[RMDB]
RNA sequence: GGGAACGACUCGAGUAGAGUCGAAAACCUAUUGGUAUGUUCUUCCCUUAUGACAUCGAACUUGUCACAGGAAAGCAAAAUAUUCUCCUGCGCAAGUAUGGCCGUGGUGGUUAUCACUACACCCCAUUGAGCAACGUGUUCGCACGUUGCAAAAGAAACAACAACAACAAC
Reactivity to 2A3 in 0.01 (KOAc 150mM, MgCl2 10mM, bicine 150mM(pH8.5), 24C), signal-to-noise 5, nucleotides 027 to 129: c000c000u050a170u060u180g040g000u070a050u040g080u000u010c000u040u050c040c000c000u000u070a190u180g040a000c010a010u030c080g070a020a110c030u030u040g120u190c060a010c010a100g010g000a080a020a040g080c170a110a080a140a000u200a110u110u080c040u030c030c000u020g000c020g000c020a000a010g020u010a070u070g080g030c030c050g000u000g050g000u010g060g090u080u070a100u130c020a000c000u060a020c000a020c000c020c000c030a070u060u170g040a070
Reactivity to DMS in 0.01 (KOAc 150mM, MgCl2 10mM, bicine 150mM(pH8.5), 24C), signal-to-noise 5, nucleotides 027 to 129: c010c000u020a080u060u030g030g040u020a070u030g050u020u000c090u080u020c060c030c010u060u040a070u050g010a090c010a100u060c150g040a050a020c050u000u050g030u000c070a020c030a050g050g030a050a060a020g040c180a080a220a160a150u040a100u000u000c070u040c040c020u040g040c260g050c050a060a000g010u000a090u030g030g050c050c110g040u010g000g000u020g020g040u060u050a070u000c050a000c080u010a140c130a260c020c000c030c000a060u060u030g020a190

Annotation:
An RNA of 170 nucleotides, treated with 2A3 and DMS and read out base by base. It was measured as part of the RMDB library 15KLIB. For 2A3 the reverse transcriptase was SuperScript II with manganese. The DMS profile rests on 9,167 reads. The reactions ran in a buffer of 150 mM KOAc, 10 mM MgCl2 and 150 mM bicine (pH 8.5), at 24 C. For 2A3, 4,700 sequencing reads were counted.